[RMDB]
RNA sequence: GGGAACGACUCGAGUAGAGUCGAAAAAAGGUAGAGUCAAUUAAUGCACUGAGUCUAGUUAGAAUGAUUGGGUUAAGGUGAGAGUGGCCAUUCCUAACACUUAGCAAAACAGUGUGUAUGCAUAUGCCUGUGUGCAGUUAUUUGAUUAUACAUACACCAUGCUAACAAUUUUCGAAUUGUUAGCAUGAAAAGAAACAACAACAACAAC
Reactivity to DMS in 0.01 (KOAc 150mM, MgCl2 10mM, bicine 150mM(pH8.5), 24C), signal-to-noise 6, nucleotides 027 to 156: a070a070g010g020u000a050g010a100g030u000c030a060a070u000u000a060a080u010g020c040a080c040u010g010a100g030u010c050u000a100g020u010u000a070g020a100a090u000g010a110u010u000g010g020g030u000u000a070a080g010g020u000g020a130g020a070g030u000g010g000c040c040a130u000u010c030c010u000a040a080c040a050c040u000u000a080g030c080a060a080a070a100c060a080g020u000g030u000g010u000a020u000g010c030a050u000a080u000g010c010c030u000g020u000g030u000g020c010a090g020u000u000a080u000u000u010g010a100u000u000a090u000a030c010a060u000a050c020a030c060
Reactivity to 2A3 in 0.01 (KOAc 150mM, MgCl2 10mM, bicine 150mM(pH8.5), 24C), signal-to-noise 9, nucleotides 027 to 156: a000a000g090g010u050a040g010a020g040u020c020a020a040u060u090a060a050u090g020c040a020c070u040g020a010g050u020c030u050a030g030u070u050a060g060a150a110u110g040a120u060u060g020g010g020u070u090a080a050g030g010u040g030a070g000a010g040u040g020g000c010c010a030u090u080c010c000u010a020a010c030a010c040u050u090a030g040c050a030a060a050a060c040a060g020u020g000u010g020u100a040u060g010c040a030u060a030u160g020c010c020u110g010u030g030u070g080c020a040g030u070u070a090u080u080u040g020a010u000u080a030u030a070c020a010u050a010c010a010c030
This 207-nucleotide RNA was probed chemically with DMS and 2A3. For DMS, 18,865 sequencing reads were counted. The reactions ran in a buffer of 150 mM KOAc, 10 mM MgCl2 and 150 mM bicine (pH 8.5), at 24 C. For 2A3, 31,229 sequencing reads were counted. Reactivities are given for positions 27 through 156.